This 207-nucleotide RNA was probed chemically with 2A3.
For 2A3, 618 sequencing reads were counted.
2A3 adducts were read by reverse transcription with SuperScript II with manganese.
RNA sequence: GGGAACGACUCGAGUAGAGUCGAAAACAUAGCGUUUCACACUGUGCGCCAUUAACAUUGUUUAUGCAAGCACGUUUCGCAAUGUACGGCGCAGAAACAUUGCCAACACAAAUACGCUUCACGAUGUAAAACAUCGGUGCGUUCGCGCACCGAUGAACCAGAGAGUAGGCUUCGGCCUACUCUCUGGAAAAGAAACAACAACAACAAC
Reactivity to 2A3 in 0.01 (KOAc 150mM, MgCl2 10mM, bicine 150mM(pH8.5), 24C), signal-to-noise 2, nucleotides 027 to 156: c100a070u110a020g010c000g020u070u100u070c070a020c020a000c040u060g000u060g060c000g040c010c000a060u070u100a080a020c010a020u000u030g060u050u210u080a080u140g110c110a120a130g060c110a060c240g000u000u010u170c020g010c000a010a010u010g020u030a020c020g010g060c040g010c030a000g000a000a070a000c060a030u040u000g010c050c020a100a030c080a030c040a200a100a030u170a080c060g090c010u030u180c100a080c120g100a140u200g020u280a040a050a100a060c000a010u000c000g000g000u000g010c000g000u000u010c190g000c000g020c000a010c070c000g000a000u000g000a000a000